RNA sequence: GGGAACGACUCGAGUAGAGUCGAAAAGAUAUGGACCGACUGUACCCAGCGAAGAACUACGUCGGAAACGACGUAGGGAGCUGGUAUUCGGUCCUAAGUCAAAGCACGGAAGGUUCGCCUUCCGUGCGAUCUCAGGGACGUUCGCGUCCCUGAGAUCAAAAGAAACAACAACAACAAC
Reactivity to DMS in 0.01 (KOAc 150mM, MgCl2 10mM, bicine 150mM(pH8.5), 24C), signal-to-noise 4, nucleotides 027 to 126: g020a020u000a280u010g000g000a030c000c000g010a040c300u010g010u010a070c300c010c170a000g030c000g000a110a100g010a110a200c000u000a010c000g010u000c000g000g020a050a050a120c010g030a020c000g000u010a000g020g000g010a050g030c000u000g000g000u000a010u000u000c000g000g010u000c000c000u000a020a070g000u010c000a140a110a220g000c000a020c000g000g000a030a000g000g020u010u020c250g000c000c000u000u000c000c000g050u010g000c000
Reactivity to 2A3 in 0.01 (KOAc 150mM, MgCl2 10mM, bicine 150mM(pH8.5), 24C), signal-to-noise 3, nucleotides 027 to 126: g010a020u040a010u120g000g000a000c000c010g040a020c100u200g060u200a130c080c080c030a020g020c010g300a300a030g000a040a000c000u000a000c000g000u000c000g010g000a010a020a010c010g010a000c010g000u010a020g010g000g000a010g000c030u040g030g040u030a080u070u080c000g000g000u000c010c010u000a020a010g000u000c040a180a200a020g000c000a000c000g000g030a000a010g100g020u090u240c300g180c080c000u000u000c000c000g010u000g000c010
This 177-nucleotide RNA was probed chemically with DMS and 2A3. The reactions ran in a buffer of 150 mM KOAc, 10 mM MgCl2 and 150 mM bicine (pH 8.5), at 24 C. It was measured as part of the RMDB library TTRDES. Reactivities are given for positions 27 through 126.